[RMDB]
RNA sequence: GGGAACGACUCGAGUAGAGUCGAAAACGAUCCUCGAGAGAGGAUCGACGAGUCUUCGGACUCGAUUACCGCGUGGAUGUGCCGCGGGGCUACGAUGGUAUUGUGGGAAAGAAUACCAUUGUACCUUCUUGUCGUAGCCGAACAACUAGCACGUCGAAUACGCCACGAUCUUCGGAUCGUGGCGUAUAAAAGAAACAACAACAACAAC
Reactivity to 2A3 in 0.01 (KOAc 150mM, MgCl2 10mM, bicine 150mM(pH8.5), 24C), signal-to-noise 1, nucleotides 027 to 156: c010g000a000u000c000c000u010c030g000a010g000a000g000a000g040g000a000u000c020g000a000c000g000a000g000u000c000u040u100c220g090g000a000c000u000c000g000a090u020u160a080c010c000g000c020g000u060g270g000a000u010g000u000g050c000c000g000c020g010g000g000g000c000u000a000c000g000a000u100g000g000u000a000u030u000g020u020g000g000g020a000a200a070g100a150a020u020a040c000c000a000u000u030g000u000a000c000c000u090u120c130u050u210g050u020c000g000u000a000g000c000c010g000a020a050c040a020a030c010u130a010g000c000a000c000g010u000c000g000a020
About this RNA
Structure probing data (2A3) for a 207-nucleotide construct. The 2A3 profile rests on 899 reads. Values cover nucleotides 27 to 156. It was measured as part of the RMDB library OK3TST. 2A3 adducts were read by reverse transcription with SuperScript II with manganese. The RNA was probed in 150 mM KOAc, 10 mM MgCl2 and 150 mM bicine (pH 8.5) at 24 C.